[RMDB]
Chemical mapping of a 177-nucleotide RNA with DMS and 2A3. For DMS the reverse transcriptase was MarathonRT.

RNA sequence: GGGAACGACUCGAGUAGAGUCGAAAAGUCACAGUGGUUUGAGCAUCCUGAGCCCUGAGGCUGUUUCUGGUGGUGGACCUCCUCCUCCUCAGUAGGGAUGGGUAGAGGAAGCAGCUAGAGGCCUUGGUGUUUUAAGAAUCUUCGGAUUCUUAAAACAAAAAGAAACAACAACAACAAC
Reactivity to DMS in 0.01 (KOAc 150mM, MgCl2 10mM, bicine 150mM(pH8.5), 24C), signal-to-noise 7, nucleotides 027 to 126: g010u010c040a070c040a060g010u010g010g010u000u010u010g010a110g020c060a080u020c040c020u000g000a090g010c040c020c020u010g000a060g010g000c030u000g010u010u020u000c010u000g010g020u010g010g010u010g000g000a210c050c020u000c010c030u000c010c020u000c010c010u000c060a150g010u050a210g000g000g000a030u020g010g010g010u020a080g000a060g000g000a080a090g000c030a130g000c020u010a070g000a080g000g000c030c010u000u000g000g010
Reactivity to 2A3 in 0.01 (KOAc 150mM, MgCl2 10mM, bicine 150mM(pH8.5), 24C), signal-to-noise 9, nucleotides 027 to 126: g040u030c020a010c030a070g050u090g100g110u060u090u120g090a040g020c020a060u040c020c020u040g030a020g020c010c000c010u040g030a040g030g000c010u010g050u050u110u020c010u010g040g010u040g040g210u070g030g080a120c000c010u020c010c000u000c000c000u020c010c010u090c050a220g060u300a100g030g000g020a030u080g010g000g040u070a060g010a010g030g000a010a010g030c010a000g000c000u020a010g010a020g030g000c000c000u010u020g040g020